The record gives the reactivity of an RNA of 207 nucleotides to 2A3 and DMS. DMS adducts were read by reverse transcription with MarathonRT. The DMS profile rests on 18,180 reads. Conditions: 150 mM KOAc, 10 mM MgCl2 and 150 mM bicine (pH 8.5), 24 C.
[RMDB]
RNA sequence: GGGAACGACUCGAGUAGAGUCGAAAAAUCUAAUUCGUUAGAUAUCUAUCCUAAGUCGUGGAAACAUGAACUACUGCUUUUGACGGCUAUUCGGAAACGAAUAGCCGAUAAGCAGCAUGUCACUCCACGAUAUGGAGGCUGGCGUUUUCGAACGCAACCUAAUAUGUUAAUUCGUUAACAUAUUAGGAAAAGAAACAACAACAACAAC
Reactivity to 2A3 in 0.01 (KOAc 150mM, MgCl2 10mM, bicine 150mM(pH8.5), 24C), signal-to-noise 9, nucleotides 027 to 156: a000u030c010u020a030a020u110u070c120g050u070u020a010g010a050u090a080u120c060u090a220u040c020c000u050a170a070g010u000c010g000u010g000g000a070a300a020c000a010u020g020a090a050c050u230a080c010u250g020c010u070u080u080u190g240a140c010g000g000c000u000a000u000u000c000g020g040a060a080a080c010g000a010a010u000a000g000c000c000g000a000u000a000a000g000c000a000g000c000a000u000g000u000c010a010c080u000c000c000a000c000g000a000u000a000u020g010g010a020g050g040c140u110g080g000c020g000u000u020u050u090c150g080a040a010c030g000c060a030a040
Reactivity to DMS in 0.01 (KOAc 150mM, MgCl2 10mM, bicine 150mM(pH8.5), 24C), signal-to-noise 5, nucleotides 027 to 156: a050u010c010u000a020a040u000u010c250g030u000u000a020g020a040u000a110u000c100u000a140u000c010c010u000a060a180g010u010c010g040u000g010g020a060a080a060c040a050u000g010a100a070c030u000a070c000u000g010c010u000u000u000u000g010a210c090g030g000c000u000a010u000u000c000g020g000a180a100a280c000g020a050a010u000a010g020c010c000g010a000u000a000a020g000c000a020g000c000a020u000g010u000c020a080c080u000c000c010a020c010g010a010u000a070u000g010g000a040g010g010c040u000g010g010c050g000u000u010u000u000c140g010a120a090c050g000c040a090a240